The data come from the RNA Mapping Database (RMDB), library OK1LIB.
Structure probing data (2A3) for a 177-nucleotide construct.

[RMDB]
RNA sequence: GGGAACGACUCGAGUAGAGUCGAAAAUCUAUACUGUGACUUGUGUGAGAAUACUCUUAGUACAAGCGAGUACACGCAGUAUAGUGCCACUUGUGUGAGAAUACUUUUAGUACAAGCGAGUACACGCAGUCCACGGAUUGUUCGCAAUCCGUGGACUAAAAGAAACAACAACAACAAC
Reactivity to 2A3 in 0.01 (KOAc 150mM, MgCl2 10mM, bicine 150mM(pH8.5), 24C), signal-to-noise 1, nucleotides 027 to 126: u000c000u000a050u000a000c000u000g000u060g010a000c000u070u070g000u000g000u010g000a000g140a280a080u200a070c050u090c040u060u090a160g040u060a000c000a030a030g030c000g160a190g010u030a050c030a000c080g010c000a000g000u000a000u000a000g010u000g120c030c000a080c030u030u060g050u030g000u000g100a040g130a210a190u150a160c000u000u000u090u120a030g000u000a050c040a090a000g000c010g000a040g080u110a090c050a000c130g000c000
For 2A3 the reverse transcriptase was SuperScript II with manganese.